About this RNA:
Structure probing data (DMS and 2A3) for a 177-nucleotide construct. For DMS, 48,305 sequencing reads were counted. The RNA was probed in 150 mM KOAc, 10 mM MgCl2 and 150 mM bicine (pH 8.5) at 24 C. It was measured as part of the RMDB library OK2TST. DMS adducts were read by reverse transcription with MarathonRT.
RNA sequence: GGGAACGACUCGAGUAGAGUCGAAAACUUGGUGCGCCAGCAGGCUUUUCUGGUCCGCCGUGAGCGUCUGGCGGGUCUUGAUGUCCGCAAUCUGCUGCUCGAACUCGGCCCGCGCCUUCUGGCCGGCUAAACAUCACAAAUUCGUUUGUGAUGUUUAAAAAGAAACAACAACAACAAC
Reactivity to DMS in 0.01 (KOAc 150mM, MgCl2 10mM, bicine 150mM(pH8.5), 24C), signal-to-noise 9, nucleotides 027 to 126: c040u000u010g020g020u000g020c200g020c060c010a010g000c110a030g010g000c020u000u010u020u010c140u010g010g000u000c050c020g020c110c050g010u010g000a030g010c040g010u000c050u000g000g010c010g010g010g000u000c060u010u010g010a130u010g010u000c010c010g010c030a130a110u010c070u000g000c050u000g010c020u000c010g000a080a090c110u000c010g010g000c040c000c030g020c230g000c000c000u000u000c030u000g000g000c010c040g000g000c120
Reactivity to 2A3 in 0.01 (KOAc 150mM, MgCl2 10mM, bicine 150mM(pH8.5), 24C), signal-to-noise 7, nucleotides 027 to 126: c020u050u120g150g010u120g090c110g000c020c000a000g010c020a000g030g010c000u260u150u150u120c130u210g040g000u040c020c020g010c000c000g090u120g010a020g010c020g040u040c050u020g040g000c020g000g010g020u040c020u050u200g180a190u190g030u010c010c000g000c030a010a140u070c050u090g010c020u030g000c010u020c020g040a080a040c020u010c030g020g000c000c010c000g030c010g000c000c000u020u030c000u000g000g000c000c010g010g000c010